[RMDB]
RNA sequence: GGGAACGACUCGAGUAGAGUCGAAAAACAUAGGUUGGGCCAUAGGCGCUGCGGAUCAUCAUCUUGCCCUCGCCAGGACCGCUCCCGUUCUACUACUUGGCGUCGCGGAUACCGGGUUGGAAAACAAGAUUGAAAUAAAGUUCGCUUUAUUUCAAUCAAAAGAAACAACAACAACAAC
Reactivity to 2A3 in 0.01 (KOAc 150mM, MgCl2 10mM, bicine 150mM(pH8.5), 24C), signal-to-noise 3, nucleotides 027 to 126: a000c040a060u190a060g080g000u040u080g070g020g010c020c040a070u060a110g050g000c030g000c060u030g000c020g040g020a020u070c030a040u030c000a030u020c090u070u130g040c010c000c010u000c020g000c000c010a030g010g020a040c000c010g030c030u020c000c010c000g010u050u050c020u080a130c010u020a020c000u030u060g050g000c010g030u030c030g010c030g040g010a020u030a080c000c020g040g030g000u040u070g060g040a070a090a010a010c010a040a050
Reactivity to DMS in 0.01 (KOAc 150mM, MgCl2 10mM, bicine 150mM(pH8.5), 24C), signal-to-noise 7, nucleotides 027 to 126: a080c090a110u010a090g010g010u000u010g020g000g010c030c040a090u010a100g010g000c040g020c180u000g010c070g010g000a060u010c100a080u010c090a090u000c060u000u000g010c030c040c030u000c060g010c020c030a090g010g000a070c040c020g000c050u000c020c030c020g010u010u000c060u000a100c080u000a050c070u010u000g010g020c050g010u000c050g010c050g010g000a100u000a060c050c020g000g000g010u000u010g010g000a090a050a070a080c170a080a100
Structure probing data (2A3 and DMS) for a 177-nucleotide construct. Conditions: 150 mM KOAc, 10 mM MgCl2 and 150 mM bicine (pH 8.5), 24 C. As a SHAPE reagent, 2A3 marks flexible, mostly unpaired nucleotides at the ribose 2'-OH. Reactivities are given for positions 27 through 126. The DMS profile rests on 10,463 reads.